This 207-nucleotide RNA was probed chemically with 2A3 and DMS. DMS adducts were read by reverse transcription with MarathonRT. For 2A3 the reverse transcriptase was SuperScript II with manganese. It was measured as part of the RMDB library M2RFPK.

RNA sequence: GGGAACGACUCGAGUAGAGUCGAAAAUAGAAGAAGAGGCUAGGUGGUAUUCCGGUUUGGGAUACUUGGUAAUAUGUAACGCUAAUUGCAUAAGAUUGUAGGACGGAAUUUACAGUCUUGGUUUUUAAAAACUUCUCGUAGUUCGCUACGAGAAGAACUCAUAUACUUUCUUCGGAAAGUAUAUGAGAAAAGAAACAACAACAACAAC
Reactivity to 2A3 in 0.01 (KOAc 150mM, MgCl2 10mM, bicine 150mM(pH8.5), 24C), signal-to-noise 6, nucleotides 027 to 156: u090a010g020a050a000g010a030a000g020a000g060g000c060u040a030g050g030u030g020g000u050a060u040u010c050c050g120g080u100u190u190g120g000g000a010u020a060c010u020u060g010g010u070a070a060u040a080u170g060u040a060a020c040g020c140u080a090a070u090u080g000c020a020u020a120a020g010a030u030u030g010u030a030g010g070a010c090g020g030a040a030u060u070u060a050c020a000g000u000c000u040u040g030g020u030u020u040u070u180a080a110a010a030a040c000u010u000c000u000c000g010u000a000g020u030u040c180g000c100u000a000c000g000a000g000a000a000g000a000a000
Reactivity to DMS in 0.01 (KOAc 150mM, MgCl2 10mM, bicine 150mM(pH8.5), 24C), signal-to-noise 2, nucleotides 027 to 156: u000a130g000a140a070g020a070a090g000a070g000g000c050u000a060g010g030u010g030g020u000a080u000u010c040c020g030g040u000u000u000g020g040g010a090u000a030c040u010u000g050g000u000a060a120u000a100u000g020u000a060a080c070g050c060u010a070a140u000u010g020c020a070u010a020a090g000a040u000u010g000u000a040g040g000a230c060g000g040a080a300u000u000u000a040c020a050g000u000c010u000u000g020g020u000u010u000u030u000a020a070a140a110a110c010u010u010c000u000c010g040u000a020g010u000u000c300g030c010u000a010c000g010a020g000a000a010g000a020a060